[RMDB]
Structure probing data (DMS and 2A3) for a 177-nucleotide construct. For 2A3 the reverse transcriptase was SuperScript II with manganese.

RNA sequence: GGGAACGACUCGAGUAGAGUCGAAAAGAUAUGGAAAUUGAACUCUUUUGACGCAUCAUGGCUCGGAAACGAGCCAGAUGCGAUAAGAGUCAAUUUCCUAAGUCAAACGUACAGUUCGCUGUACGAACCUAUGAGCUUAGUUCGCUAAGCUCAUAGGAAAAGAAACAACAACAACAAC
Reactivity to DMS in 0.01 (KOAc 150mM, MgCl2 10mM, bicine 150mM(pH8.5), 24C), signal-to-noise 5, nucleotides 027 to 126: g010a040u000a300u010g000g000a000a020a000u000u000g010a080a050c020u000c000u000u000u000u000g030a240c120g000c000a000u000c000a130u000g010g000c000u010c000g010g000a080a100a190c010g000a010g020c010c000a000g000a000u000g010c000g030a020u010a010a010g010a030g010u000c000a010a000u000u000u000c010c000u000a020a090g010u010c020a090a100a300c010g010u000a020c000a020g010u010u010c300g020c010u000g010u000a010c000g000a100a160
Reactivity to 2A3 in 0.01 (KOAc 150mM, MgCl2 10mM, bicine 150mM(pH8.5), 24C), signal-to-noise 5, nucleotides 027 to 126: g030a010u080a040u140g000g010a010a010a010u020u020g090a250a170c010u020c020u030u120u120u290g280a160c060g010c000a000u010c110a290u030g010g000c020u000c000g020g030a050a090a050c010g020a000g000c000c000a010g000a000u000g000c010g000a000u010a010a000g010a000g000u000c000a000a000u010u000u000c000c000u000a080a000g050u010c050a080a070a090c000g000u000a010c010a020g010u030u190c230g100c190u010g000u010a010c000g010a020a020

DMS adducts were read by reverse transcription with MarathonRT.
High DMS reactivity at an A or C suggests that its Watson-Crick edge is free.